[RMDB]
RNA sequence: GGGAACGACUCGAGUAGAGUCGAAAAGAAGAAAAAGCGUCAAGACGACUUCGCACAAGCUGUGGAGCGAGGUAGCGCAUAAACGCAGAUAGAUUCACAGCCUAAGGACAGAAGAACUGUCCACAAAACUAAUACCCUGAUUCGUCAGGGUAUUAGUAAAAGAAACAACAACAACAAC
Reactivity to 2A3 in 0.01 (KOAc 150mM, MgCl2 10mM, bicine 150mM(pH8.5), 24C), signal-to-noise 9, nucleotides 027 to 126: g050a020a030g110a020a110a010a010a020g020c020g040u070c090a100a050g080a080c020g020a050c010u020u010c020g010c000a050c030a100a070g020c030u010g010u020g040g010a030g010c010g010a010g020g030u090a070g090c020g000c040a030u190a050a140a000c020g000c020a000g040a170u120a050g130a060u060u070c010a010c010a020g020c000c020u090a100a050g010g000a000c010a000g050a130a020g040a210a100c010u010g000u010c000c000a020c030a010a040a000
Reactivity to DMS in 0.01 (KOAc 150mM, MgCl2 10mM, bicine 150mM(pH8.5), 24C), signal-to-noise 6, nucleotides 027 to 126: g000a050a040g020a050a110a080a150a110g010c030g000u010c080a100a100g000a170c050g000a090c000u000u000c000g020c010a070c110a130a120g010c080u000g010u030g000g000a050g020c010g000a030g000g000u000a070g000c020g000c120a100u030a060a090a060c010g010c020a050g000a100u040a030g010a190u000u010c020a020c050a060g000c020c110u010a100a070g000g000a010c000a000g000a200a110g020a130a120c010u000g010u000c000c000a070c260a030a040a070